Source: RMDB library M2PK50, as collected in RNAgym. An RNA of 177 nucleotides, treated with 2A3 and DMS and read out base by base. For 2A3, 3,703 sequencing reads were counted. For DMS, 1,141 sequencing reads were counted.
RNA sequence: GGGAACGACUCGAGUAGAGUCGAAAACACACAAGGUUCGCCUUGUGUGCAAGAAUAGUCGAAUACUACCGUAGAAGUAUUCAGGUCACAUAACUACGGAAAUGGCGUUCUGCUUCGGCAGAACGAAGUCACAACGUGAUUUCGAUCACGUUGUGACAAAAGAAACAACAACAACAAC
Reactivity to 2A3 in 0.01 (KOAc 150mM, MgCl2 10mM, bicine 150mM(pH8.5), 24C), signal-to-noise 4, nucleotides 027 to 126: c010a000c000a000c010a050a010g030g020u040u070c150g150c020c000u010u000g000u010g000u000g000c000a030a020g080a120a120u150a140g120u130c070g000a020a000u000a020c010u070a290c010c000g020u000a010g000a160a000g030u020a000u020u030c050a030g100g100u170c060a030c020a240u130a220a090c010u000a010c000g010g060a020a030a110u230g150g000c010g010u000u000c010u000g020c020u020u040c190g110g000c010a000g000a010a000c000g000a000a010
Reactivity to DMS in 0.01 (KOAc 150mM, MgCl2 10mM, bicine 150mM(pH8.5), 24C), signal-to-noise 1, nucleotides 027 to 126: c010a020c000a000c000a000a010g000g040u000u020c210g030c010c000u000u020g000u010g010u000g000c080a070a030g010a080a100u000a100g020u010c130g010a030a030u000a020c000u000a080c000c020g000u000a000g010a100a060g030u000a020u000u000c030a150g000g010u020c090a110c070a020u020a130a120c010u000a020c010g000g000a240a090a100u030g010g040c000g030u000u000c020u000g020c000u000u010c160g000g010c000a010g000a010a010c000g010a010a050